[RMDB]
The data come from the RNA Mapping Database (RMDB), library M2PK50. Chemical mapping of a 177-nucleotide RNA with 2A3 and DMS. 2A3 adducts were read by reverse transcription with SuperScript II with manganese. Values cover nucleotides 27 to 126. The RNA was probed in 150 mM KOAc, 10 mM MgCl2 and 150 mM bicine (pH 8.5) at 24 C.
RNA sequence: GGGAACGACUCGAGUAGAGUCGAAAACGAAUAGAAUUCGUUCUAUUCGAAUGACUGCUAAAAGCAGAGUUGACUGCGCCGAGCAGAAACGGCAAAGGUAAAAGUAGCCCAGAUUCGUCUGGGCUAAAACGAUAGCAGUUUUCGAACUGCUAUCGUUAAAAGAAACAACAACAACAAC
Reactivity to 2A3 in 0.01 (KOAc 150mM, MgCl2 10mM, bicine 150mM(pH8.5), 24C), signal-to-noise 1, nucleotides 027 to 126: c010g000a000a000u010a000g000a010a010u000u070c110g030u050u000c010u020a000u000u000c000g000a010a000u090g020a020c010u010g040c060u110a000a120a100a060g030c010a000g050a070g130u100u150g150a130c000u000g010c030g000c030c020g010a010g080c030a040g120a140a030a030c030g000g000c040a040a100a120g100g000u160a140a080a000a090g070u020a020g010c000c000c000a000g010a000u030u050c060g030u000c090u020g030g000g000c000u000a000a040
Reactivity to DMS in 0.01 (KOAc 150mM, MgCl2 10mM, bicine 150mM(pH8.5), 24C), signal-to-noise 4, nucleotides 027 to 126: c010g000a010a000u000a010g000a020a030u000u020c210g010u000u000c000u010a000u000u000c010g030a140a080u000g000a170c010u000g010c000u000a050a080a050a160g010c010a020g000a160g010u000u000g010a120c000u000g000c180g000c010c030g020a080g000c040a060g000a040a100a150c050g000g000c070a060a120a070g000g000u000a040a070a110a120g010u000a030g000c000c000c010a000g010a020u000u000c210g020u000c000u000g000g000g010c000u000a000a010